[RMDB]
RNA sequence: GGGAACGACUCGAGUAGAGUCGAAAAGAGUAGCGAGAUAUAUUCUCGCCAACUAAGAAAUGUGUCAAGGGGGAAAGAAAGUGAAGUUUUAAGAAAGCUCGUUUAUGUGGAAUUUCGCUUUGAACGGCUCUCUAGUAGGAUUCGUCCUACUAGAGAGAAAAGAAACAACAACAACAAC
Reactivity to 2A3 in 0.01 (KOAc 150mM, MgCl2 10mM, bicine 150mM(pH8.5), 24C), signal-to-noise 9, nucleotides 027 to 126: g080a020g040u120a010g000c030g030a010g020a010u090a010u050a110u300u020c000u000c000g000c000c000a030a000c000u020a020a030g120a090a120a050u240g070u030g040u090c040a040a060g030g010g010g010g010a090a010a040g080a050a050a000g040u030g080a060a010g020u020u010u030u100a100a090g060a090a070a020g030c050u030c080g080u060u080u050a130u120g070u080g050g020a030a040u000u040u070c040g020c050u060u040u040g050a080a040c030g040g000
Reactivity to DMS in 0.01 (KOAc 150mM, MgCl2 10mM, bicine 150mM(pH8.5), 24C), signal-to-noise 6, nucleotides 027 to 126: g000a060g010u010a230g020c000g000a010g000a030u010a130u040a120u050u010c010u000c000g010c010c040a040a030c030u020a080a100g010a080a110a080u030g010u010g000u020c040a060a050g000g000g010g000g000a090a060a050g000a060a030a030g000u010g010a030a070g010u010u010u020u010a060a120g000a120a080a110g000c070u020c110g000u010u000u010a030u050g020u010g000g000a040a050u000u000u010c040g010c050u020u000u010g010a070a090c090g000g000
This 177-nucleotide RNA was probed chemically with 2A3 and DMS. The RNA was probed in 150 mM KOAc, 10 mM MgCl2 and 150 mM bicine (pH 8.5) at 24 C. For DMS, 14,762 sequencing reads were counted. Source: RMDB library OK1LIB, as collected in RNAgym.